[RMDB]
RNA sequence: GGGAACGACUCGAGUAGAGUCGAAAAGAACUUCAAUACAAUUGCAUUAUGGUCUGCCGUCUGGUUCUUCUGCAUGGGUCACGCCAUUGUUAGGAUCGUAAUCAUGUUACUACUGUGUGCCGGAGCGUUCGAAUGAUGCGCAUUCUGAUUUGCAUGACCUAACAUCGGAGUUCGCUCCGAUGUUAGGAAAAGAAACAACAACAACAAC
Reactivity to 2A3 in 0.01 (KOAc 150mM, MgCl2 10mM, bicine 150mM(pH8.5), 24C), signal-to-noise 4, nucleotides 027 to 156: g030a040a030c030u090u080c090a080a130u120a150c050a050a210u150u140g010c050a030u100u080a040u210g010g000u020c040u040g030c020c000g010u020c030u040g030g000u070u010c000u020u000c000u020g040c020a050u080g040g000g020u040c020a010c040g020c030c010a050u050u100g060u090u140a020g020g030a050u080c020g020u080a080a010u070c040a040u090g060u100u070a050c030u020a030c020u050g040u020g010u040g150c010c040g050g010a010g010c040g030u050u070c020g070a100a040u140g050a020u090g030c050g000c040a030u060u000c010u020g070a100u010u050u100g030c030a040u090g020a040
Reactivity to DMS in 0.01 (KOAc 150mM, MgCl2 10mM, bicine 150mM(pH8.5), 24C), signal-to-noise 2, nucleotides 027 to 156: g000a060a070c060u000u020c040a050a120u010a060c100a060a190u000u000g030c040a100u010u040a060u020g040g040u010c040u000g050c010c070g000u000c020u020g000g040u000u000c030u000u000c010u000g020c090a110u000g030g080g000u000c060a080c050g000c030c040a130u010u010g010u020u000a140g020g000a080u000c060g000u010a110a040u000c010a050u000g010u000u000a080c060u000a060c060u020g020u000g030u010g040c030c000g020g000a120g010c070g050u000u000c030g030a090a080u020g010a070u000g000c040g030c060a090u000u000c030u020g020a150u000u000u010g020c030a080u000g020a200